[RMDB]
RNA sequence: GGGAACGACUCGAGUAGAGUCGAAAAGAUAUGGAGUAGGAAGAUCAUUGUAUCCGUCCGAUAAGCUCAAUAUCGGAAACGAUAUGAGCUUUUGACGGACGGAUACAAUGAUCCCUACUCCUAAGUCGGACAAUAUUAUCUUCGGAUAAUAUUGUCCAAAAGAAACAACAACAACAAC
Reactivity to DMS in 0.01 (KOAc 150mM, MgCl2 10mM, bicine 150mM(pH8.5), 24C), signal-to-noise 3, nucleotides 027 to 126: g010a100u010a300u000g000g000a010g000u000a000g010g000a140a110g010a020u000c000a000u010u000g000u000a010u000c010c000g020u010c000c010g010a200u000a010a010g010c000u000c000a060a090u000a000u000c000g020g000a100a090a180c000g020a010u000a000u000g000a020g010c000u000u000u000u000g020a200c130g000g020a000c000g000g000a000u000a000c000a000a000u000g000a010u000c000c000c000u000a010c000u000c000c000u000a000a060g020u000c130

Source: RMDB library TTRINS, as collected in RNAgym. Structure probing data (DMS) for a 177-nucleotide construct. DMS adducts were read by reverse transcription with MarathonRT. The RNA was probed in 150 mM KOAc, 10 mM MgCl2 and 150 mM bicine (pH 8.5) at 24 C.